Structure probing data (2A3) for a 207-nucleotide construct.
Source: RMDB library VIROID, as collected in RNAgym.
Conditions: 150 mM KOAc, 10 mM MgCl2 and 150 mM bicine (pH 8.5), 24 C.
[RMDB]
RNA sequence: GGGAACGACUCGAGUAGAGUCGAAAACCAAUUCCGAGCGAAGGGGGCGCGGGAGGAAGGAGGAUUACCCGACAGGGAGUGACGGUAAAGAUGCGGGGAACGCCGAUGGGAACUCUCCCAAGAAGAAAAGAAGGGAAAAUCGGGAAGUGGAGGGAUCGACAUAAGCGAAGUUCGCUUCGCUUAUGUCAAAAGAAACAACAACAACAAC
Reactivity to 2A3 in 0.01 (KOAc 150mM, MgCl2 10mM, bicine 150mM(pH8.5), 24C), signal-to-noise 1, nucleotides 027 to 156: c030c010a040a070u150u010c040c040g050a040g000c050g020a040a120g020g000g000g010g000c080g000c020g030g070g020a070g010g020a050a040g030g030a060g030g010a010u080u110a110c050c040c050g070a040c000a020g060g030g000a010g020u010g000a020c020g000g000u050a080a070a030g050a050u200g020c030g030g000g010g000a030a030c040g040c090c010g030a140u110g060g000g010a040a040c020u010c020u010c080c000c000a090a010g070a050a000g000a040a110a000a010g050a020a030g030g000g010a050a070a070a180u090c030g000g020g010a120a040g020u110g070g100a050g040g000g010a030u080c100